[RMDB]
RNA sequence: GGGAACGACUCGAGUAGAGUCGAAAACAACACGUCCUCGUCGUACAGAGUGGUAACAUGUGUCACCACAUAUCCAAGCUUGGGUACACGGGCUUGACCCAACCCCUUGGGCGGAUGGUUGCACAUGAAAAGAAGUAACACUUCGGUGUUACUUCAAGUGCGGAUAAAACUUCGGUUUUAUCCGCACAAAAGAAACAACAACAACAAC
Reactivity to 2A3 in 0.01 (KOAc 150mM, MgCl2 10mM, bicine 150mM(pH8.5), 24C), signal-to-noise 1, nucleotides 027 to 156: c050a030a020c010a000c110g130u130c010c040u070c110g130u040c070g000u100a050c050a070g010a070g010u070g010g170u240a060a040c000a010u000g000u000g020u000c010a020c050c000a080c090a090u250a030u060c000c000a000a000g040c000u030u060g000g000g000u030a000c000a020c080g000g000g000c010u250u210g140a300c020c000c000a010a010c000c010c000c020u000u010g040g000g000c030g000g000a030u020g000g000u000u020g020c010a000c000a000u040g050a000a040a010a000g000a000a000g000u000a000a000c000a000c000u060u100c220g000g000u000g000u000u000a000c000u000u000c020a030a010